[RMDB]
RNA sequence: GGGAACGACUCGAGUAGAGUCGAAAACAACGACCAGUGCCCCAUGUGCAUGAACAGCUCGCUGAAAGAUGUUGAUGGCGCCAAUGCUCAGGGCUAUGACACCGGAAUCGGUGGCUCCACAUCGACAGGGUUUUAUCCUAUUCGUAGGAUAAAACCCAAAAGAAACAACAACAACAAC
Reactivity to 2A3 in 0.01 (KOAc 150mM, MgCl2 10mM, bicine 150mM(pH8.5), 24C), signal-to-noise 2, nucleotides 027 to 126: c000a000a030c040g070a040c020c060a060g040u050g050c020c000c030c010a120u130g020u060g000c020a010u060g070a100a030c010a010g010c010u030c040g000c020u030g070a110a140a070g110a070u140g000u200u080g050a100u060g080g030c040g000c030c020a060a020u010g020c010u030c040a010g000g000g040c000u070a130u190g020a010c000a010c010c050g070g040a130a160u190c010g000g010u000g000g010c010u010c020c040a090c000a060u040c040g090a060c050a060
Reactivity to DMS in 0.01 (KOAc 150mM, MgCl2 10mM, bicine 150mM(pH8.5), 24C), signal-to-noise 2, nucleotides 027 to 126: c060a070a090c150g020a100c080c060a090g010u010g000c030c010c030c090a130u010g000u000g010c030a050u000g000a100a090c090a030g050c040u000c050g030c060u050g000a110a100a110g000a130u020g010u000u010g000a030u010g010g000c100g020c090c070a060a080u000g000c060u000c060a080g000g000g010c120u000a060u010g030a110c030a020c010c000g010g000a090a020u010c040g010g000u000g010g000c060u000c050c070a060c050a040u010c030g020a040c170a100
An RNA of 177 nucleotides, treated with 2A3 and DMS and read out base by base.
The DMS profile rests on 1,779 reads.
The reactions ran in a buffer of 150 mM KOAc, 10 mM MgCl2 and 150 mM bicine (pH 8.5), at 24 C.
For 2A3, 1,459 sequencing reads were counted.
Source: RMDB library OK2TRN, as collected in RNAgym.